[RMDB]
RNA sequence: GGGAACGACUCGAGUAGAGUCGAAAACAGAUUUGGACUGUCAGAGACACUGCCUGAGAGAGUGCUUGACUGCAGGAUGAAGCAACCCCAAGAAAUAGCAUCAGUUUGGAAAGGACCCCCAGGAAGCAGGCAUGGGUGAGAAUCGAAAGUGAUUAACCUUUCCUAACGAAUUCGUUCGUUAGGAAAGAAAAGAAACAACAACAACAAC
Reactivity to 2A3 in 0.01 (KOAc 150mM, MgCl2 10mM, bicine 150mM(pH8.5), 24C), signal-to-noise 2, nucleotides 027 to 156: c030a000g090a100u060u080u190g030g020a040c000u020g020u120c010a040g030a020g040a150c000a000c040u050g060c010c050u110g020a060g010a000g010a000g050u040g010c040u070u090g050a060c010u030g000c010a030g040g040a060u070g050a080a000g040c020a030a070c040c060c030c000a040a050g060a010a060a040u090a020g050c030a010u040c060a010g050u080u110u120g010g000a040a030a000g000g050a030c000c000c000c000c000a000g050g040a030a000g010c020a010g020g000c000a010u040g040g000g020u060g010a070g010a010a050u060c060g000a090a000a000g060u090g070a050u030u010a010a010c010
Reactivity to DMS in 0.01 (KOAc 150mM, MgCl2 10mM, bicine 150mM(pH8.5), 24C), signal-to-noise 2, nucleotides 027 to 156: c030a100g010a220u020u000u000g010g010a140c000u000g030u010c040a130g030a300g000a090c050a120c030u000g050c030c000u000g000a110g000a130g020a140g030u000g020c050u000u000g010a140c080u000g010c040a070g020g010a040u000g020a070a080g000c050a030a110c050c000c010c040a130a120g010a050a080a140u000a090g000c040a070u000c040a070g030u000u000u000g020g000a050a080a100g010g000a130c030c020c000c010c020a080g040g010a060a060g010c010a020g020g000c000a050u000g000g000g000u000g010a060g000a020a040u030c030g000a040a080a130g010u000g000a170u000u000a040a100c150